Source: RMDB library OK1LIB, as collected in RNAgym. This 177-nucleotide RNA was probed chemically with DMS and 2A3. 2A3 adducts were read by reverse transcription with SuperScript II with manganese. For DMS the reverse transcriptase was MarathonRT.

[RMDB]
RNA sequence: GGGAACGACUCGAGUAGAGUCGAAAAGAAGUGGCAGGGACAUGCCCCACAAGCUCGUUCUAGCAACAUAUGUUUGGCUAGUUCGAGCGAUUAGUCUAGAGGAGCGUCCUCUCGCCUCUUCACGAGACGGUGAGGUAAAUUUCGAUUUACCUCACCGAAAAGAAACAACAACAACAAC
Reactivity to DMS in 0.01 (KOAc 150mM, MgCl2 10mM, bicine 150mM(pH8.5), 24C), signal-to-noise 3, nucleotides 027 to 126: g000a010a000g000u000g000g070c030a030g000g010g000a020c010a160u050g010c020c020c000c010a170c190a130a190g000c000u000c000g010u000u020c000u010a000g010c000a050a010c020a220u040a140u090g020u040u000u040g010g000c000u000a000g000u000u000c010g000a000g000c020g010a010u060u030a160g040u010c170u030a100g000a180g000g020a230g040c040g020u000c000c010u010c020u000c180g020c010c000u010c010u020u000c000a130c140g000a110g000a220
Reactivity to 2A3 in 0.01 (KOAc 150mM, MgCl2 10mM, bicine 150mM(pH8.5), 24C), signal-to-noise 7, nucleotides 027 to 126: g010a010a000g010u020g010g000c020a010g030g000g000a010c020a040u260g010c000c000c000c000a040c010a030a020g000c000u000c000g000u000u010c000u000a010g010c010a030a070c040a090u300a060u300g160u110u110u080g130g020c000u000a000g000u000u000c000g000a000g000c000g010a000u010u090a040g060u020c060u090a040g010a170g050g020a150g030c010g000u000c000c000u060c010u010c040g000c000c000u000c000u000u000c000a020c060g070a080g020a030